[RMDB]
Source information
This 207-nucleotide RNA was probed chemically with DMS and 2A3. DMS adducts were read by reverse transcription with MarathonRT. For 2A3, 4,608 sequencing reads were counted. Reactivities are given for positions 27 through 156.

RNA sequence: GGGAACGACUCGAGUAGAGUCGAAAAAUACUUCUCAGGAUGGCGCGUUGCAGUCCAACAAGAUCCAGGGAUUGUACAGAAUUUUCCUAUACCUCGAGUCGGGUUUGGAAUCUAAGGUUGACUCGCUAAAACUUUACGUGGUUCGCCACGUAAAGAACUAAUUUAAUGUGUUCGCACAUUAAAUUAGAAAAGAAACAACAACAACAAC
Reactivity to DMS in 0.01 (KOAc 150mM, MgCl2 10mM, bicine 150mM(pH8.5), 24C), signal-to-noise 2, nucleotides 027 to 156: a120u010a090c020u000u000c020u000c020a120g020g000a080u010g020g030c220g010c100g030u010u000g040c030a140g000u010c040c020a070a120c050a100a300g000a070u000c020c040a110g000g020g020a040u010u000g000u000a160c060a130g020a110a100u000u010u000u000c010c010u000a100u020a020c080c020u020c000g040a040g050u010c020g020g010g000u000u000u000g000g000a090a060u000c070u000a080a080g000g000u000u000g010a070c040u000c040g000c070u000a050a070a130a100c000u000u000u000a010c000g040u000g000g000u000u000c300g000c020c010a000c010g010u010a000a010a010g000a020a130
Reactivity to 2A3 in 0.01 (KOAc 150mM, MgCl2 10mM, bicine 150mM(pH8.5), 24C), signal-to-noise 4, nucleotides 027 to 156: a000u060a020c020u030u030c020u010c020a020g030g020a040u070g050g090c050g020c050g110u070u060g020c090a070g080u040c050c010a020a020c030a040a060g040a090u030c030c020a030g020g000g020a000u030u140g020u020a040c040a060g190a220a160u030u040u010u040c000c010u040a040u070a120c010c020u010c060g030a000g000u010c020g010g000g000u040u090u060g050g020a050a030u020c060u090a150a130g080g040u100u120g050a020c010u030c010g010c020u070a080a080a050a090c000u000u000u000a000c000g000u010g020g040u040u060c180g020c070c000a000c000g000u010a000a000a000g000a000a020